[RMDB]
RNA sequence: GGGAACGACUCGAGUAGAGUCGAAAACGGCAUUUCCCCAGCAGCCAUGACCUACCAGGCUGCGGUGCGGCUCGCCGCGCAGGUCAUCCCUCAUCGGGCGCGUCCUGCGUCCUUCCACGCCAACCCAAGACCAUUGCUUCCUUCGGGAAGCAAUGAACCUUUAGAUACACUUCGGUGUAUCUAAAGGAAAAGAAACAACAACAACAAC
Reactivity to 2A3 in 0.01 (KOAc 150mM, MgCl2 10mM, bicine 150mM(pH8.5), 24C), signal-to-noise 3, nucleotides 027 to 156: c040g050g010c040a100u000u040u040c010c020c000c010a040g000c010a000g000c000c020a220u110g050a140c020c050u100a130c090c050a050g010g000c010u000g010c010g000g020u040g000c010g010g020c040u060c070g040c020c000g000c010g010c000a010g000g000u010c020a130u110c030c000c020u130c050a160u170c070g000g020g010c040g010c080g030u110c020c040u070g000c000g020u000c000c020u070u010c020c010a080c050g010c000c010a060a060c030c000c000a050a020g080a070c070c000a010u000u000g000c000u010u000c000c000u030u040c070g060g000g000a000a000g000c000a000a000u000g000a010a010